An RNA of 177 nucleotides, treated with DMS and 2A3 and read out base by base.

RNA sequence: GGGAACGACUCGAGUAGAGUCGAAAAGGUAUGUGAAUCUAUUGUGUUUUUUUGGUUUUAUCCUGUAUGAUGACAUUUUUUAGCAACACAUGACCGAGUACUUCCAAAAUAAGCAUGAACAAAGAUGGGCCAUUUAAAUGUUCGCAUUUAAAUGGCCAAAAGAAACAACAACAACAAC
Reactivity to DMS in 0.01 (KOAc 150mM, MgCl2 10mM, bicine 150mM(pH8.5), 24C), signal-to-noise 1, nucleotides 027 to 126: g000g130u000a060u000g000u000g000a050a300u020c000u040a020u010u000g020u000g090u000u030u000u050u000u000u000g000g000u010u070u070u120a050u020c000c000u000g000u010a040u090g000a020u090g000a120c000a000u000u000u000u000u000u000a070g020c180a200a080c010a000c000a000u040g030a040c010c000g000a080g000u000a030c150u000u010c000c010a000a040a050a030u000a050a150g030c040a010u000g000a100a160c230a040a050a050g000a040u000g000
Reactivity to 2A3 in 0.01 (KOAc 150mM, MgCl2 10mM, bicine 150mM(pH8.5), 24C), signal-to-noise 2, nucleotides 027 to 126: g050g050u070a010u050g050u020g020a060a060u000c000u040a010u000u020g030u000g170u000u000u020u000u040u020u010g080g190u020u110u100u240a120u210c000c000u170g030u120a040u220g010a020u100g030a040c030a040u000u060u060u000u020u050a040g000c110a040a060c000a000c000a000u020g080a010c020c020g000a000g010u030a180c020u050u030c000c000a010a020a000a160u110a070a030g120c050a020u120g060a070a020c130a130a240a000g140a070u300g080

The 2A3 profile rests on 866 reads.
Values cover nucleotides 27 to 126.